RNA sequence: GGGAACGACUCGAGUAGAGUCGAAAAUGGGUGAGUUGCUUCAUCAUUUUGGUUUAAUUUUUUUUACAGUAGUUGGAACCAAGAAGCCGUCACUCGUGAAGUAACUUCGCUUGGACCUCACUUGCGGGGAGUAAUGGUAGUUCGCUACCAUUACUCCAAAAGAAACAACAACAACAAC
Reactivity to DMS in 0.01 (KOAc 150mM, MgCl2 10mM, bicine 150mM(pH8.5), 24C), signal-to-noise 2, nucleotides 027 to 126: u000g000g010g040u010g010a100g030u020u000g010c010u000u000c020a100u010c160a160u000u020u000u000g020g010u000u000u000a020a020u000u000u000u000u000u000u000u000a110c210a070g000u000a040g010u000u030g010g020a000a020c010c010a020a040g010a050a050g000c040c170g000u000c040a050c070u000c070g000u000g000a060a090g010u000a040a050c040u000u000c030g000c020u000u000g010g010a140c030c040u000c120a100c070u010u000g020c180g000g010
Reactivity to 2A3 in 0.01 (KOAc 150mM, MgCl2 10mM, bicine 150mM(pH8.5), 24C), signal-to-noise 2, nucleotides 027 to 126: u140g010g000g000u030g030a050g040u090u010g040c010u000u020c000a100u010c050a100u130u070u000u070g000g000u020u010u000a040a060u010u050u050u020u040u050u090u190a170c120a070g150u200a040g030u080u110g130g000a010a010c000c030a000a060g090a010a010g050c060c050g040u030c000a020c110u020c000g010u040g040a030a010g000u010a070a030c000u060u070c020g000c020u030u040g050g060a050c000c000u040c040a020c070u050u070g030c040g030g050
Structure probing data (DMS and 2A3) for a 177-nucleotide construct. For DMS, 1,680 sequencing reads were counted. It was measured as part of the RMDB library OK2TST. For 2A3 the reverse transcriptase was SuperScript II with manganese.